Conditions: 150 mM KOAc, 10 mM MgCl2 and 150 mM bicine (pH 8.5), 24 C. This 207-nucleotide RNA was probed chemically with 2A3 and DMS. Values cover nucleotides 27 to 156. The DMS profile rests on 6,848 reads. The 2A3 profile rests on 5,099 reads. DMS adducts were read by reverse transcription with MarathonRT.
[RMDB]
RNA sequence: GGGAACGACUCGAGUAGAGUCGAAAAUACAUAUCCCUCCAGAUCCCUUUCCCAUCAGAUCUGAAUACCGAUCUUGUGGUCGAAAAAGGAGGAAAAGCAGCAUUCAGACUGGCCUUGGCCUCUUUGCUGGCACAGCCCUGCUCUGAGCGGGAAGCGCCUACUGAUAGCAGUUCGCUGCUAUCAGUAGAAAAGAAACAACAACAACAAC
Reactivity to 2A3 in 0.01 (KOAc 150mM, MgCl2 10mM, bicine 150mM(pH8.5), 24C), signal-to-noise 6, nucleotides 027 to 156: u170a010c070a040u200a120u120c010c020c030u020c010c030a070g020a210u060c000c000c010u020u010u010c010c000c000a010u020c030a010g010a000u010c010u090g050a100a080u170a210c060c060g000a000u000c000u000u020g010u020g010g030u060c060g050a020a020a000a030a030g010g010a020g010g000a020a090a020a000g050c060a000g000c010a050u050u090c010a030g020a040c020u040g010g010c010c020u140u280g050g010c030c020u070c050u180u300u190g110c140u070g020g000c010a010c010a030g000c000c000c000u030g010c040u000c020u020g030a020g010c040g020g020g010a040a040g040c000g010c020
Reactivity to DMS in 0.01 (KOAc 150mM, MgCl2 10mM, bicine 150mM(pH8.5), 24C), signal-to-noise 3, nucleotides 027 to 156: u000a110c090a100u010a090u000c050c000c020u000c050c010a150g010a120u000c000c010c020u000u010u000c050c010c010a150u000c230a050g010a030u030c020u030g010a210a160u010a110c110c090g000a030u010c020u000u000g060u010g010g010u010c060g000a070a070a080a070a120g030g010a070g060g020a020a060a090a160g010c000a050g040c030a070u000u000c130a050g000a020c020u010g000g020c100c100u000u020g020g030c000c010u000c050u000u010u010g020c040u000g000g030c070a100c060a130g010c050c020c040u000g000c040u000c110u020g010a090g030c010g040g000g010a090a100g030c090g000c100